Chemical mapping of a 177-nucleotide RNA with DMS and 2A3. 2A3 adducts were read by reverse transcription with SuperScript II with manganese. The 2A3 profile rests on 2,092 reads. For DMS the reverse transcriptase was MarathonRT. High DMS reactivity at an A or C suggests that its Watson-Crick edge is free. Conditions: 150 mM KOAc, 10 mM MgCl2 and 150 mM bicine (pH 8.5), 24 C. It was measured as part of the RMDB library OK2TRN. For DMS, 3,867 sequencing reads were counted.
RNA sequence: GGGAACGACUCGAGUAGAGUCGAAAAGGCCAUUUGCUGUUGCAGCAAUUCAACCAGCGUUUGCAGCGAGGUGGCACGGCGGCAACCAAUGCCCGCCACCACCCGACGUGGCACCAGUUUGUACAGGGUGUAAAACAGGGUUCGCCCUGUUUUACACAAAAGAAACAACAACAACAAC
Reactivity to DMS in 0.01 (KOAc 150mM, MgCl2 10mM, bicine 150mM(pH8.5), 24C), signal-to-noise 4, nucleotides 027 to 126: g010g020c020c040a070u000u000u000g020c030u000g000u000u000g020c060a060g010c030a070a080u000u000c150a070a130c110c080a070g010c060g010u000u000u000g030c040a080g000c040g040a090g000g010u000g000g000c070a090c210g010g010c010g000g000c030a050a130c220c250a070a100u000g010c120c010c010g020c010c000a080c020c000a010c020c020c020g000a050c100g010u000g000g010c020a130c040c020a110g010u010u010u000g010u000a090c160a120g000g000
Reactivity to 2A3 in 0.01 (KOAc 150mM, MgCl2 10mM, bicine 150mM(pH8.5), 24C), signal-to-noise 1, nucleotides 027 to 126: g080g030c030c010a050u010u030u160g000c050u060g040u120u070g040c050a050g020c020a060a070u100u100c040a050a070c040c040a030g050c010g080u130u170u150g030c020a000g000c010g050a090g000g020u030g000g000c050a010c050g000g000c020g020g000c010a090a010c030c110a050a130u040g020c000c020c020g000c020c000a000c000c000a000c000c020c020g050a040c040g050u040g020g000c010a010c000c000a060g100u110u170u160g080u070a080c040a080g030g090